[RMDB]
RNA sequence: GGGAACGACUCGAGUAGAGUCGAAAAAAUGUUCGUGGCGCAACUUCCCGACGAGGAUGGCAAGCCGAAUUGGGUUAAACCGGGCGAUGGAAAUGAAACUUUCCGCGUUGACUUCACCGACUUCGGCAAGAUUGCUUACAUUCGUGUAAGCAAUCUUAAAAGAAACAACAACAACAAC
Reactivity to DMS in 0.01 (KOAc 150mM, MgCl2 10mM, bicine 150mM(pH8.5), 24C), signal-to-noise 5, nucleotides 027 to 126: a050a040u000g010u000u000c060g030u010g010g010c060g020c110a070a070c110u000u010c020c000c000g020a140c120g000a100g000g000a060u010g010g010c120a100a170g000c020c010g010a030a020u010u000g000g000g000u000u010a020a050a090c080c060g000g010g020c020g000a060u000g020g010a020a020a020u000g010a150a080a120c270u000u000u000c010c010g020c040g020u010u000g000a070c090u000u010c090a070c020c000g000a060c170u000u000c020g020g000c060
Reactivity to 2A3 in 0.01 (KOAc 150mM, MgCl2 10mM, bicine 150mM(pH8.5), 24C), signal-to-noise 2, nucleotides 027 to 126: a020a030u140g010u060u050c090g000u070g080g000c060g000c060a070a040c040u030u020c010c010c000g020a030c010g020a030g070g040a050u070g070g000c060a050a070g000c020c000g010a010a010u050u060g070g000g010u050u060a060a040a050c070c020g060g050g000c040g110a150u110g030g040a030a010a020u140g080a110a080a060c040u010u030u010c000c000g000c030g000u000u040g040a040c010u030u020c090a020c070c020g090a050c010u030u010c020g000g000c020